RNA sequence: GGGAACGACUCGAGUAGAGUCGAAAAGAGCUGAAGUACAGCAAGAACGACGUGAUCCUUGGCAAAGCGUCGAAGAUAAGCGUGCCGAGUGCCAAGGAUUAACGGCACGCGAGGCGAAGACGCCAGAGCGACGAUGACUAUUCGUAGUCAUCGUCGCAAAAGAAACAACAACAACAAC
Reactivity to 2A3 in 0.01 (KOAc 150mM, MgCl2 10mM, bicine 150mM(pH8.5), 24C), signal-to-noise 2, nucleotides 027 to 126: g090a020g010c020u010g020a170a020g120u250a160c000a000g000c010a000a040g050a070a020c060g040a000c050g020u020g020a010u010c000c000u010u000g000g000c040a100a100a030g030c020g010u020c020g020a030a010g060a020u250a100a000g000c000g000u000g000c000c000g030a070g090u120g020c000c040a000a000g010g010a000u020u160a010a000c000g000g000c010a000c000g010c020g010a030g030g010c070g070a170a100g090a140c030g000c000c040a050g010a020
Reactivity to DMS in 0.01 (KOAc 150mM, MgCl2 10mM, bicine 150mM(pH8.5), 24C), signal-to-noise 1, nucleotides 027 to 126: g000a190g000c000u000g000a000a170g000u100a040c000a080g050c020a130a110g000a040a190c000g000a000c030g060u000g010a150u000c000c020u000u000g000g000c080a040a040a300g000c110g060u000c000g000a040a180g020a090u000a010a170g000c000g000u000g030c000c000g000a300g040u020g000c000c020a000a100g000g000a110u000u020a100a030c070g020g030c000a000c000g000c010g000a100g000g000c000g000a050a180g000a200c030g000c000c300a050g000a150